[RMDB]
RNA sequence: GGGAACGACUCGAGUAGAGUCGAAAACUCGCCAAAGCAAUGAGCUUGCUUGCAGACUUCGUUUUCGAAGAGAUACCACAAGACAUGGUGCAAGAGUGUCAUCGAGGUACACGAUCCUUGAUCAAGCGAGCAUGCGUGAAUUCGUUCACGCAUGCUCAAAAGAAACAACAACAACAAC
Reactivity to DMS in 0.01 (KOAc 150mM, MgCl2 10mM, bicine 150mM(pH8.5), 24C), signal-to-noise 1, nucleotides 027 to 126: c020u000c060g080c120c130a050a060a090g020c070a040a090u020g000a200g010c000u000u010g000c010u000u030g000c050a070g020a110c020u030u000c000g000u020u000u000u000c070g010a060a020g010a130g010a170u010a100c090c000a160c100a100a070g000a120c080a120u000g000g060u000g000c020a040a020g000a130g040u010g010u000c080a020u000c020g000a020g010g000u010a050c110a050c160g000a070u000c000c100u040u000g000a020u020c070a040a080g000c150
Reactivity to 2A3 in 0.01 (KOAc 150mM, MgCl2 10mM, bicine 150mM(pH8.5), 24C), signal-to-noise 2, nucleotides 027 to 126: c000u020c040g000c040c040a080a000a000g040c060a100a190u140g010a090g120c040u020u060g000c020u030u020g070c050a080g010a180c000u030u030c030g210u160u190u110u160c050g010a010a000g000a010g020a120u080a160c000c060a030c030a120a000g140a040c050a050u070g100g050u060g000c020a050a030g010a040g080u070g040u040c010a020u070c050g000a000g000g030u070a050c050a000c110g020a050u010c010c030u020u080g000a060u090c050a080a030g000c020